[RMDB]
RNA sequence: GGGAACGACUCGAGUAGAGUCGAAAAGAUCGACGGUGUUGAGGUCGACCAAGAAACCGGCCUCGUCACGAUCACGCUCGCCACGACCUACGAGUGCGAGCCGGAGAGCGAGGAAACGACCGGCGAGCAGUGGGUCCAACUGCCGGAUGGAGUCUCGCUCCUCCGAUAAUUUCGAUUAUCGGAGGAGAAAAGAAACAACAACAACAAC
Reactivity to 2A3 in 0.01 (KOAc 150mM, MgCl2 10mM, bicine 150mM(pH8.5), 24C), signal-to-noise 3, nucleotides 027 to 156: g040a040u060c030g070a030c080g090g020u050g010u050u110g030a020g000g000u020c030g030a100c000c050a100a060g160a100a050a020c020c010g000g000c000c000u000c010g000u000c010a020c020g010a030u060c020a010c100g040c000u030c030g040c060c020a080c090g040a040c000c040u050a040c070g120a050g120u100g000c010g000a020g000c000c000g060g020a090g000a010g080c070g010a030g030g060a140a110a030c050g060a060c030c000g000g000c020g020a010g000c020a030g010u040g030g000g010u000c030c000a040a040c040u090g040c040c040g030g000a030u080g030g020a060g020u000c000u000c030g010
The data come from the RNA Mapping Database (RMDB), library OK3TST. Chemical mapping of a 207-nucleotide RNA with 2A3. 2A3 adducts were read by reverse transcription with SuperScript II with manganese. For 2A3, 2,473 sequencing reads were counted.